Chemical mapping of a 177-nucleotide RNA with 2A3 and DMS.
[RMDB]
RNA sequence: GGGAACGACUCGAGUAGAGUCGAAAAUAAAAUAAUGCACAUAAUCCAGUCGCAGACGCUAAAAAUGACGCUGCGUCGCGACGGAUGUGGCAACGCGCACUCUCGCCGAAGUGAAAUCGGUAAAAAAUACAUUACAGGGAUUCGUCCCUGUAAUGUAAAAAGAAACAACAACAACAAC
Reactivity to 2A3 in 0.01 (KOAc 150mM, MgCl2 10mM, bicine 150mM(pH8.5), 24C), signal-to-noise 3, nucleotides 027 to 126: u060a000a050a010a030u220a030a090u100g030c040a030c000a250u240a290a050u150c010c020a060g000u000c000g000c090a100g000a010c000g000c030u110a030a060a100a090a110u220g080a050c080g050c270u080g000c010g000u000c000g020c000g000a000c000g000g010a000u000g000u000g010g000c010a030a040c050g070c010g020c070a040c030u020c000u030c050g000c010c010g020a030a020g020u060g160a070a060a150u020c030g010g000u060a170a050a000a000a000a000
Reactivity to DMS in 0.01 (KOAc 150mM, MgCl2 10mM, bicine 150mM(pH8.5), 24C), signal-to-noise 3, nucleotides 027 to 126: u010a050a050a100a100u010a070a080u010g020c020a100c010a040u000a190a040u000c010c010a180g040u000c010g030c000a090g010a020c000g020c020u010a010a040a090a130a100u010g020a080c240g010c150u000g000c010g020u000c010g010c010g000a010c030g010g000a010u010g030u000g020g000c040a040a070c120g010c120g000c050a080c050u010c020u000c130g020c010c000g000a030a040g010u000g000a030a070a060u000c000g010g000u010a000a010a100a060a060a090
The 2A3 profile rests on 3,528 reads.
Values cover nucleotides 27 to 126.
Source: RMDB library M2PK90, as collected in RNAgym.